[RMDB]
Source: RMDB library TTRDEL, as collected in RNAgym. The record gives the reactivity of an RNA of 177 nucleotides to DMS and 2A3. Conditions: 150 mM KOAc, 10 mM MgCl2 and 150 mM bicine (pH 8.5), 24 C. Values are in units of 0.01, from 0 to 300, in steps of 10.

RNA sequence: GGGAACGACUCGAGUAGAGUCGAAAAGAUAUGGACAAUCGGAGCAACAGCGUGUUCUCGGAAACGAGAGACACGACAUGCUCCGUUGUCCUAAGUCAAAACUCCAGGUUGUUCGCAACCUGGAGAACUAAAGCUUAAGGUUCGCCUUAAGCUUUAGAAAAGAAACAACAACAACAAC
Reactivity to DMS in 0.01 (KOAc 150mM, MgCl2 10mM, bicine 150mM(pH8.5), 24C), signal-to-noise 7, nucleotides 027 to 126: g000a020u000a120u010g000g000a010c000a010a010u010c030g030g000a010g020c000a080a120c210a170g000c000g010u000g010u000u000c000u000c000g010g000a030a020a050c000g000a010g010a070g010a010c000a000c000g000a030c130a100u010g010c000u000c000c000g010u000u000g000u000c000c000u000a000a030g000u000c000a100a070a110a150c010u000c000c000a010g000g010u000u000g010u000u020c220g010c000a000a000c000c000u000g010g000a000g000a010a100
Reactivity to 2A3 in 0.01 (KOAc 150mM, MgCl2 10mM, bicine 150mM(pH8.5), 24C), signal-to-noise 6, nucleotides 027 to 126: g000a000u020a000u060g000g000a000c020a010a090u300c230g020g000a000g000c060a070a290c130a300g040c040g000u000g000u020u000c010u010c000g010g000a020a010a000c000g000a010g000a020g070a020c000a000c000g050a020c010a050u190g000c000u000c000c000g000u000u000g000u000c000c000u000a010a000g000u000c010a020a020a100a190c010u000c000c000a000g010g010u000u010g040u070u100c290g010c160a000a000c000c000u000g000g000a000g000a000a000